[RMDB]
RNA sequence: GGGAACGACUCGAGUAGAGUCGAAAAGAAAGAAACAGUUGGCUAGCUGAACGCACGAGGGUUAAAGCCAACCGUGCGAGUCGGAAAGCACGACCGACAAGAAAAGCCCUACAAUCGUGCAAGAAAACGAUUAUAGUACGUUCGCGUACUAUAAUCGAAAAGAAACAACAACAACAAC
Reactivity to DMS in 0.01 (KOAc 150mM, MgCl2 10mM, bicine 150mM(pH8.5), 24C), signal-to-noise 6, nucleotides 027 to 126: g010a080a080a080g010a130a100a120c050a050g030u000u000g010g000c060u020a070g000c050u000g000a080a150c050g000c030a030c030g010a100g000g000g000u000u050a050a120a110g020c020c000a070a080c110c020g010u020g000c030g010a140g000u010c000g000g000a090a050a080g010c010a010c000g000a060c020c000g010a030c000a120a090g000a040a030a050a070g020c010c010c170u040a070c170a080a080u010c000g030u000g010c010a220a120g010a040a060a100a140
Reactivity to 2A3 in 0.01 (KOAc 150mM, MgCl2 10mM, bicine 150mM(pH8.5), 24C), signal-to-noise 9, nucleotides 027 to 126: g050a010a080a010g100a020a120a010c040a020g020u060u040g080g000c060u050a070g020c030u060g080a110a020c020g000c020a010c020g020a110g060g040g020u110u250a100a040a030g070c000c000a010a020c030c000g000u010g010c010g020a030g000u000c010g010g030a150a120a020g030c010a010c010g000a000c000c000g010a010c020a030a010g110a030a090a010a010g030c010c000c000u050a070c080a040a060u040c000g000u000g000c010a010a030g090a020a060a010a010